[RMDB]
RNA sequence: GGGAACGACUCGAGUAGAGUCGAAAAAGCAUCAUGGCGCAUACGUGCGCCAUGAUGCAAGUCACGCGAGCGGCAACGGCUAACGGUGAGUACCCUCACCCUCUGGCCUACCUUAAGAACGGGAUAGUUCUUCAGGCUGUUUGCGGGUUCCGUUAGGUGGCGCUGUAGAGGCCACUCGGGCUCGACACUGCGUUACCUCGCAGGUCACCGAUACACGGGUUUCGUGAUCGUGGUCUGUGUAGCGCCCGGACCAAUCCGGCCAGUGAAUGCUACGGUUCGCCGUAGCAAAAAGAAACAACAACAACAAC
Reactivity to DMS in 0.01 (KOAc 150mM, MgCl2 10mM, bicine 150mM(pH8.5), 24C), signal-to-noise 8, nucleotides 027 to 266: a130g010c000a010u000c000a010u000g000g020c000g050c010a040u010a090c210g030u000g020c010g020c010c000a000u010g000a000u000g020c010a020a030g000u010c040a050c030g000c030g010a030g020c010g000g010c100a060a060c210g000g000c010u010a020a150c300g000g000u000g000a020g010u020a150c290c270c010u000c000a010c000c000c010u000c030u000g000g000c000c000u000a050c060c010u000u000a020a010g000a010a000c000g010g020g030a170u020a130g010u000u000c010u000u000c070a030g010g010c040u000g010u000u000u000g000c040g000g000g010u000u000c010c010g010u010u020a080g010g020u010g010g010c000g010c010u000g000u000a050g000a060g000g000c010c000a030c060u000c060g000g000g000c110u010c090g000a060c010a100c020u000g000c000g010u000u020a110c270c190u010c010g010c010a000g000g000u000c000a050c030c020g000a060u010a130c010a010c000g010g010g010u010u020u020c010g020u000g000a120u010c090g020u000g000g010u000c000u000g000u000g000u000a020g010c040g010c060c020c050g000g000a070c070c090a120a140u010c090c060g000g010c070c030a080g010u010g010a120a140
Reactivity to 2A3 in 0.01 (KOAc 150mM, MgCl2 10mM, bicine 150mM(pH8.5), 24C), signal-to-noise 3, nucleotides 027 to 266: a010g000c000a000u010c010a010u000g030g000c030g040c010a020u050a080c220g090u070g030c030g010c060c010a000u000g000a000u000g000c000a000a000g000u000c000a000c020g020c020g020a040g040c010g030g040c080a070a020c050g010g020c020u060a200a040c010g000g000u010g000a000g020u130a100c010c070c000u000c000a000c000c000c010u030c010u020g010g000c000c000u000a020c000c000u000u020a010a000g010a000a000c020g050g040g210a140u160a180g020u010u010c010u010u000c010a010g000g030c010u030g020u070u030u040g020c020g010g000g000u080u030c010c000g040u100u170a060g000g160u050g020g010c010g020c010u010g010u010a040g020a010g130g000c000c010a040c030u030c040g030g030g020c070u090c100g030a040c080a050c240u020g000c000g000u010u030a120c020c010u040c010g000c010a010g010g010u000c000a010c020c040g020a020u140a090c010a010c040g120g090g080u140u300u300c020g000u010g030a070u090c090g000u010g010g000u020c000u020g140u000g020u030a010g010c000g020c000c030c000g010g000a010c030c000a040a060u100c030c030g030g030c000c000a010g040u140g170a080a080